[RMDB]
RNA sequence: GGGAACGACUCGAGUAGAGUCGAAAACAUAGCGUUUCACAAUGUGCGCAAUUAACAUUGUUUAUGCAAGCACGUUUCGCAAUGUACGGCGCAGAAACAUUGCCAACACAAAUACGCUUCACGAUGUAAAACAUCGGUGCGUUCGCGCACCGAUGAAUCAUAAAUUGAUGUUCGCAUCAAUUUAUGAAAAAGAAACAACAACAACAAC
Reactivity to DMS in 0.01 (KOAc 150mM, MgCl2 10mM, bicine 150mM(pH8.5), 24C), signal-to-noise 5, nucleotides 027 to 156: c040a100u000a070g010c020g030u010u000u000c060a090c040a120a130u000g010u000g010c020g000c090a110a140u000u000a110a050c020a060u000u000g020u000u000u000a050u010g020c030a110a100g010c000a050c040g020u010u000u000c120g020c140a040a040u000g030u000a060c040g020g010c070g030c030a050g040a090a070a040c020a030u000u000g020c000c060a050a060c060a060c050a050a060a110u000a050c030g010c020u000u000c060a070c070g000a100u010g010u000a060a080a090a210c010a010u000c000g020g030u000g020c000g040u000u010c300g040c040g050c000a010c000c000g010a010u010g000a030a090
Reactivity to 2A3 in 0.01 (KOAc 150mM, MgCl2 10mM, bicine 150mM(pH8.5), 24C), signal-to-noise 9, nucleotides 027 to 156: c040a050u190a020g000c000g010u010u030u030c040a020c000a030a030u020g000u010g010c010g010c030a040a170u210u130a040a010c020a040u030u040g080u070u140u130a160u170g070c090a040a070g040c040a020c080g000u000u040u040c030g000c010a010a020u020g010u030a020c050g040g030c150g000c130a030g140a020a060a000c010a010u000u030g000c020c020a120a010c040a010c030a080a180a030u190a070c050g020c040u080u100c080a060c110g100a070u100g050u250a060a060a080a040c000a000u000c010g000g000u000g000c000g000u020u030c120g030c000g000c020a000c000c010g000a000u000g000a000a010